[RMDB]
RNA sequence: GGGAACGACUCGAGUAGAGUCGAAAAGGCAGCACGUGUCUUGUAGGGCACGUAGUGUGUGCCAGGCACUGUGCACACAGUGAGGCCUGAGAGAUAGGGCUCAUGUCCUCGUGGAACUCAGCCUGGGCAGGUCCGAAGAUUUCGAUCUUCGGACCUGAAAAGAAACAACAACAACAAC
Reactivity to DMS in 0.01 (KOAc 150mM, MgCl2 10mM, bicine 150mM(pH8.5), 24C), signal-to-noise 2, nucleotides 027 to 126: g000g020c060a100g040c020a020c000g010u000g010u000c010u020u010g010u000a130g000g000g010c010a010c000g020u000a030g060u000g030u000g020u010g000c000c010a010g010g000c090a170c050u000g010u000g010c090a080c080a030c030a130g040u000g000a060g010g020c060c040u000g010a080g010a080g020a130u020a180g050g010g010c010u000c000a030u010g000u020c020c000u000c040g020u000g000g010a080a100c050u010c100a140g000c010c010u000g010g040g000
Reactivity to 2A3 in 0.01 (KOAc 150mM, MgCl2 10mM, bicine 150mM(pH8.5), 24C), signal-to-noise 1, nucleotides 027 to 126: g070g020c000a030g000c020a040c010g000u010g000u000c000u050u160g300u300a230g050g040g000c030a000c000g040u040a080g010u010g010u000g000u010g040c000c000a010g000g000c030a060c210u120g020u080g080c100a020c020a010c000a040g090u070g100a010g040g010c000c000u010g040a030g010a000g000a040u190a170g170g100g000c020u050c030a010u090g070u090c000c000u000c020g010u020g040g060a030a030c000u030c020a020g000c020c040u000g050g000g000